[RMDB]
RNA sequence: GGGAACGACUCGAGUAGAGUCGAAAAGAUAUGGAUGUACAAUGUUGCUAUCAUAUUGUCAGGAGAUUGCUCGGAAACGAGCAACUCCUUGGAUUUAUAUGAUAGCAACGCAAGUACAUCCUAAGUCCUCAAUCAUACGGUUCGCCGUAUGAUUGAGAAAAGAAACAACAACAACAAC
Reactivity to 2A3 in 0.01 (KOAc 150mM, MgCl2 10mM, bicine 150mM(pH8.5), 24C), signal-to-noise 2, nucleotides 027 to 126: g110a020u170a090u300g000g030a010u000g000u040a030c040a100a120u270g000u020u000g000c010u020a000u010c000a010u030a010u040u000g050u020c020a010g000g050a040g090a300u030u020g000c000u010c020g000g060a130a120a100c030g000a010g000c000a010a000c000u000c000c000u000u070g020g000a010u080u300u040a000u010a000u030g000a000u000a000g010c000a000a000c000g000c000a190a250g000u000a000c000a000u010c000c000u000a000a030g030u010c000
Reactivity to DMS in 0.01 (KOAc 150mM, MgCl2 10mM, bicine 150mM(pH8.5), 24C), signal-to-noise 3, nucleotides 027 to 126: g010a110u000a300u020g000g010a020u000g020u000a020c010a220a300u010g000u000u010g010c000u000a010u000c000a000u000a000u000u000g000u000c010a050g000g000a030g010a170u000u000g030c010u000c000g000g000a130a110a290c010g010a010g020c000a000a000c010u000c000c000u000u000g030g000a020u010u010u000a000u000a020u010g010a030u010a000g010c000a000a000c000g020c220a090a230g000u000a000c000a000u000c000c010u010a070a140g000u000c050